[RMDB]
RNA sequence: GGGAACGACUCGAGUAGAGUCGAAAAGAUAUGGAGGCGAUGAUGGAGCUACUCGGAAACGAGAAUAGCUAUGAAGUCAAUGCCUCCUAAGUCAAAAGCAAUACCACUGUUCGCAGUGGUAUUGCAAGUUAACUGUAAACUUCGGUUUACAGUUAACAAAAGAAACAACAACAACAAC
Reactivity to 2A3 in 0.01 (KOAc 150mM, MgCl2 10mM, bicine 150mM(pH8.5), 24C), signal-to-noise 8, nucleotides 027 to 126: g010a010u060a020u140g010g000a010g000g010c040g060a090u030g000a010u040g120g020a000g000c000u010a010c000u010c010g020g020a080a030a040c020g010a010g050a300a300u060a020g000c020u060a300u300g080a110a030g000u010c010a020a080u080g010c000c000u000c000c000u000a010a010g020u010c030a030a040a040a090g000c000a000a000u000a010c000c000a000c000u010g030u080u110c300g010c150a000g000u000g000g000u000a000u010u000g000c010a010a000
Reactivity to DMS in 0.01 (KOAc 150mM, MgCl2 10mM, bicine 150mM(pH8.5), 24C), signal-to-noise 6, nucleotides 027 to 126: g010a040u010a300u010g010g000a020g010g020c010g030a090u000g000a010u000g010g000a010g020c000u000a040c000u000c000g010g000a080a080a170c010g000a010g000a100a120u000a000g010c010u010a180u010g010a150a210g000u000c000a030a160u000g010c000c000u000c000c010u010a010a060g000u000c040a080a080a120a080g000c010a010a010u000a000c000c000a000c000u000g010u000u010c180g030c000a010g020u000g000g000u000a000u000u000g010c000a020a030

This 177-nucleotide RNA was probed chemically with 2A3 and DMS. Reactivities are given for positions 27 through 126. For DMS, 10,243 sequencing reads were counted. The reactions ran in a buffer of 150 mM KOAc, 10 mM MgCl2 and 150 mM bicine (pH 8.5), at 24 C. Source: RMDB library TTRDEL, as collected in RNAgym. 2A3 adducts were read by reverse transcription with SuperScript II with manganese.